[RMDB]
RNA sequence: GGGAACGACUCGAGUAGAGUCGAAAAGAUAUGGACCAUGUGAGAGGGACAUAAUUAGAUUCAACAAGUCGGAAACGACUUGCGCAUUUCUAAUUAUGUCCUACCCACCUCAUUGUGGUCCUAAGUCGAUGAUAUACGUGUUCGCACGUAUAUCAUCAAAAGAAACAACAACAACAAC
Reactivity to DMS in 0.01 (KOAc 150mM, MgCl2 10mM, bicine 150mM(pH8.5), 24C), signal-to-noise 6, nucleotides 027 to 126: g000a100u000a300u000g020g020a020c010c000a010u010g010u000g010a010g020a190g010g010g020a000c010a010u000a000a010u000u010a010g010a020u000u000c280a200a120c010a010a000g010u000c000g020g000a120a150a230c010g010a000c000u000u000g000c040g000c190a300u010u000u000c000u000a010a010u010u000a000u000g000u000c010c010u000a000c040c070c120a300c140c020u010c010a000u000u010g090u000g000g000u000c000c000u000a010a080g010u010c120
Reactivity to 2A3 in 0.01 (KOAc 150mM, MgCl2 10mM, bicine 150mM(pH8.5), 24C), signal-to-noise 4, nucleotides 027 to 126: g120a020u160a060u300g000g000a000c000c010a010u010g000u000g010a030g000a030g000g000g010a000c010a010u010a010a010u010u010a000g030a020u070u050c020a040a030c000a050a060g020u000c010g030g070a060a110a100c000g010a000c000u000u020g010c050g010c070a090u080u060u020c000u000a020a000u000u010a000u000g010u010c000c000u000a010c010c000c010a070c010c000u000c020a070u170u300g050u000g030g000u000c010c000u030a130a020g190u100c100

About this RNA:
Chemical mapping of a 177-nucleotide RNA with DMS and 2A3. Reactivities are given for positions 27 through 126. In probing experiments dimethyl sulfate is read out at A N1 and C N3, which are open when not base-paired. 2A3 adducts were read by reverse transcription with SuperScript II with manganese. For DMS the reverse transcriptase was MarathonRT.